Record summary
This 170-nucleotide RNA was probed chemically with 2A3 and DMS. For 2A3, 25,402 sequencing reads were counted. Values are in units of 0.01, from 0 to 300, in steps of 10. Conditions: 150 mM KOAc, 10 mM MgCl2 and 150 mM bicine (pH 8.5), 24 C. It was measured as part of the RMDB library 15KLIB. The DMS profile rests on 35,758 reads.
RNA sequence: GGGAACGACUCGAGUAGAGUCGAAAACAGGUGGGAGGAUCAGCCACCGGAGGGGACGCGAUGCCAAAGAGUGGGGGAAAUCUCGCGAGGGAAAUCCCAAGAAGGUCGAGAAGUCUCAAGCUACGAGGAAUCUGGAUGUUCGCAUCCAGAAAAAGAAACAACAACAACAAC
Reactivity to 2A3 in 0.01 (KOAc 150mM, MgCl2 10mM, bicine 150mM(pH8.5), 24C), signal-to-noise 8, nucleotides 027 to 129: c050a020g030g040u060g040g040g000a080g010g030a060u070c030a020g060c020c010a030c010c010g000g000a020g010g010g000g020a010c030g000c030g080a050u090g070c020c020a080a070a000g080a030g030u110g010g010g000g000g010a030a030a050u050c020u000c010g030c010g010a050g000g000g000a020a030a030u030c000c000c000a020a000g050a000a000g010g010u060c020g000a000g020a060a010g070u000c010u010c030a030a040g010c030u080a060c070g020a010g040g040a020a060
Reactivity to DMS in 0.01 (KOAc 150mM, MgCl2 10mM, bicine 150mM(pH8.5), 24C), signal-to-noise 7, nucleotides 027 to 129: c150a040g000g050u000g000g010g010a090g030g020a090u020c060a110g030c060c000a050c050c070g000g040a050g010g020g020g010a040c070g000c120g000a080u020g030c100c080a070a090a080g040a040g050u050g010g020g030g000g000a000a010a010u000c000u000c000g030c210g030a090g030g000g000a020a060a130u020c020c040c040a110a100g020a050a050g020g000u030c000g030a040g000a010a000g030u020c050u020c020a020a050g000c120u010a030c100g000a050g000g000a080a120